The record gives the reactivity of an RNA of 177 nucleotides to 2A3 and DMS. The RNA was probed in 150 mM KOAc, 10 mM MgCl2 and 150 mM bicine (pH 8.5) at 24 C. Source: RMDB library OK2TST, as collected in RNAgym. DMS (dimethyl sulfate) methylates the pairing face of unpaired adenines and cytosines.

[RMDB]
RNA sequence: GGGAACGACUCGAGUAGAGUCGAAAAGUCGGCCACGCCGGGGUUGAUGCUGGUGGCGGGGUCGGCGGCCACGUCGCGCAUCAGCGCACACAGCCGGGGGGUGCUGACGAACCACUCCACAUCGGCGGUAAUAGUCACACUUCGGUGUGACUAUUACAAAAGAAACAACAACAACAAC
Reactivity to 2A3 in 0.01 (KOAc 150mM, MgCl2 10mM, bicine 150mM(pH8.5), 24C), signal-to-noise 2, nucleotides 027 to 126: g010u000c000g000g010c000c020a030c030g050c000c000g120g030g050g000u100u200g240a180u300g040c020u060g040g300u070g020g040c020g000g010g000g030u030c070g040g030c000g000g000c040c010a090c060g190u130c060g000c000g030c040a100u030c100a300g000c000g080c000a010c020a000c010a060g110c000c000g030g000g000g010g000g010u040g010c050u060g000a080c030g000a000a000c010c000a020c010u050c050c000a090c000a140u150c060g000g030c040g000
Reactivity to DMS in 0.01 (KOAc 150mM, MgCl2 10mM, bicine 150mM(pH8.5), 24C), signal-to-noise 2, nucleotides 027 to 126: g010u000c010g000g020c010c020a070c000g030c000c000g000g000g000g030u010u010g000a150u000g000c000u000g020g020u010g000g000c050g010g000g030g010u000c010g010g000c010g000g000c010c030a090c210g000u000c080g010c010g010c010a120u010c150a120g010c020g030c030a080c130a120c140a130g010c000c000g000g000g000g000g000g010u000g010c110u010g010a080c190g000a070a100c230c020a050c060u000c010c010a050c100a150u000c040g010g000c040g010